[RMDB]
RNA sequence: GGGAACGACUCGAGUAGAGUCGAAAAAACCAUGUAAAAUUAGCAAGUGAGUAACAUUUGCUAGUAGAGUUAGUUUCCUUGGACUCAGUGCUAUGUAUUUUUCUUAAUUAUCAUUACAGAUAAUUAUACUAGAUUAGUAGUUCGCUACUAAUCUAGUAAAAGAAACAACAACAACAAC
Reactivity to DMS in 0.01 (KOAc 150mM, MgCl2 10mM, bicine 150mM(pH8.5), 24C), signal-to-noise 1, nucleotides 027 to 126: a120a090c030c010a100u000g000u020a050a050a170a040u000u030a020g010c030a000a000g000u000g000a300g010u000a200a140c010a000u000u010u000g000c000u000a000g010u000a070g010a060g020u010u000a050g000u000u000u000c010c000u020u010g040g000a090c080u000c050a070g000u040g020c030u010a030u000g010u000a020u010u000u000u000u000c010u000u000a000a020u000u000a010u000c000a100u000u040a300c090a250g000a010u000a000a000u000u000a200u000